RNA sequence: GGGAACGACUCGAGUAGAGUCGAAAAAUUGCGGGGAGCCGUGGAGGGAGUCAGUAAACUCGCGCGUUCAGCGGUUAGUGCAACAACAACAGAAACACUCGUCGAACGGGAAUGUGAAAAGCAAUAAGCUAAAUGACGGUUUCGACCGUCAUUUAGCAAAAGAAACAACAACAACAAC
Reactivity to DMS in 0.01 (KOAc 150mM, MgCl2 10mM, bicine 150mM(pH8.5), 24C), signal-to-noise 1, nucleotides 027 to 126: a070u020u000g060c040g010g010g010g000a190g020c030c070g020u010g010g000a180g000g000g020a080g020u000c090a050g010u000a100a060a040c010u000c070g010c180g000c090g040u000u010c080a080g000c000g020g060u000u000a110g000u030g010c130a030a070c050a000a070c130a080a070c160a060g000a060a100a070c030a040c030u000c030g010u000c080g000a110a120c110g030g000g100a020a000u000g000u050g010a050a050a140a180g010c100a060a030u000a030a110